The data come from the RNA Mapping Database (RMDB), library OK1LIB.
Chemical mapping of a 177-nucleotide RNA with 2A3.
Reactivities are given for positions 27 through 126.
For 2A3 the reverse transcriptase was SuperScript II with manganese.
The RNA was probed in 150 mM KOAc, 10 mM MgCl2 and 150 mM bicine (pH 8.5) at 24 C.
[RMDB]
RNA sequence: GGGAACGACUCGAGUAGAGUCGAAAACAACGAUGAUGACCCAAGCCGUACUAUUGAUGCAGGUGGCAGCGCAAGAGGGACUCAAUCAUCAACAACCACUACAACAGCCCCAAGCACAUUUGGACAAUGCACCGAUCUCAUUCGUGAGAUCGGUGCAAAAAGAAACAACAACAACAAC
Reactivity to 2A3 in 0.01 (KOAc 150mM, MgCl2 10mM, bicine 150mM(pH8.5), 24C), signal-to-noise 1, nucleotides 027 to 126: c210a000a010c060g080a000u050g000a070u000g000a030c020c000c000a000a000g130c080c050g080u060a200c000u110a080u270u230g290a150u120g060c020a020g000g000u140g020g000c000a000g000c020g140c000a000a120g000a140g200g000g000a000c030u000c150a000a060u000c000a020u000c000a000a000c000a000a000c030c070a000c050u160a170c110a290a000c120a000g000c000c000c000c000a060a000g160c000a020c000a110u140u100u070g010g000a000c020a000a060